[RMDB]
RNA sequence: GGGAACGACUCGAGUAGAGUCGAAAAUUUCACACUCACUUCAAUGACGGUGAUAGAUACUACAUAUCACUCCUGCUUAGAGGGUCAUCUAAGCUAAACCAUGUGAAUAUAACCUUUCGGGCCUCGAGAGACGGAAGUGAGUUCAAUUCUCACCAACCUUGUGACAUCUCUUCGGAGAUGUCACAAGAAAAGAAACAACAACAACAAC
Reactivity to 2A3 in 0.01 (KOAc 150mM, MgCl2 10mM, bicine 150mM(pH8.5), 24C), signal-to-noise 1, nucleotides 027 to 156: u140u090u100c080a050c020a010c030u000c060a020c020u020u000c070a080a170u220g020a040c130g000g000u050g000a010u030a020g070a000u060a190c070u020a020c130a270u050a030u050c010a000c000u010c000c020u050g000c000u000u010a000g000a050g010g070g000u030c000a020u030c050u000a000a000g010c000u000a030a010a030c070c020a180u170g080u040g070a120a010u140a020u020a120a020c070c000u080u020u030c090g150g000g000c080c060u220c040g010a010g000a000g020a000c130g170g000a010a010g000u000g000a000g020u000u000c000a000a020u000u000c030u020c030a010c090c020a000a070c030
An RNA of 207 nucleotides, treated with 2A3 and read out base by base. Reactivities are given for positions 27 through 156. For 2A3 the reverse transcriptase was SuperScript II with manganese.